This 207-nucleotide RNA was probed chemically with 2A3. The reactions ran in a buffer of 150 mM KOAc, 10 mM MgCl2 and 150 mM bicine (pH 8.5), at 24 C. It was measured as part of the RMDB library M2RFPK.

RNA sequence: GGGAACGACUCGAGUAGAGUCGAAAAGAAAGAAAGAAAGAAAUCUGACAGAAUGACGGAUUCGAUCGUUGUGGUCGGCGGGCCACCACUUCAUUCCUUCGCACUGUCUCCGGGCAGACCGCCAUAAAAAAGCGGAUCUACUUCGGUAGAUCCGCAAGACCAAUUUGUACUUCGGUACAAAUUGGUCAAAAGAAACAACAACAACAAC
Reactivity to 2A3 in 0.01 (KOAc 150mM, MgCl2 10mM, bicine 150mM(pH8.5), 24C), signal-to-noise 2, nucleotides 027 to 156: g050a010a060a000g060a040a060a010g100a060a060a000g090a030a110a050u070c100u060g050a080c030a040g260a290a210u130g060a050c020g030g000a010u030u070c050g010a020u090c090g010u040u050g000u000g000g050u030c050g010g040c060g010g000g010c010c000a000c000c010a000c000u090u050c020a060u030u010c000c030u070u110c050g040c020a020c040u000g000u040c000u010c060c110g020g020g020c010a010g020a040c000c020g000c020c020a030u300a000a100a030a020a020a010g000c000g000g000a000u010c010u000a010c000u000u060c130g010g000u000a000g000a000u000c000c000g000c000a000a010